RNA sequence: GGGAACGACUCGAGUAGAGUCGAAAAGAUAUGGACGUUGCAUGACAUGCUGAGUCGGAAACGACCAGCAACAGCAUGCCAACGUCCUAAGUCAAAAGUGGUUAAAAGGUUCGCCUUUUAACCACAACACUAAGUAUUUGUUCGCAAAUACUUAGUGAAAAGAAACAACAACAACAAC
Reactivity to DMS in 0.01 (KOAc 150mM, MgCl2 10mM, bicine 150mM(pH8.5), 24C), signal-to-noise 9, nucleotides 027 to 126: g000a040u000a280u000g000g000a020c000g020u000u000g000c000a010u000g010a140c080a190u000g010c000u000g000a170g010u000c000g010g000a060a060a130c000g000a010c000c000a010g000c010a010a040c250a120g000c010a010u000g000c150c080a000a000c000g010u000c000c000u000a000a060g000u010c030a090a070a100a100g010u000g000g010u000u000a000a000a010a010g000g010u000u010c270g010c000c000u000u000u000u000a000a000c000c000a000c000a030a120
Reactivity to 2A3 in 0.01 (KOAc 150mM, MgCl2 10mM, bicine 150mM(pH8.5), 24C), signal-to-noise 9, nucleotides 027 to 126: g010a010u030a030u090g000g000a000c010g000u000u010g000c010a010u010g080a300c010a070u030g020c000u020g030a080g120u000c010g000g000a030a030a020c010g000a000c000c000a000g060c000a020a030c080a030g170c000a000u000g020c090c010a010a000c000g000u000c000c000u000a000a000g010u010c010a010a010a070a170g000u010g000g000u000u000a010a010a010a000g040g020u050u150c250g260c010c000u000u010u000u000a000a000c000c000a000c000a000a000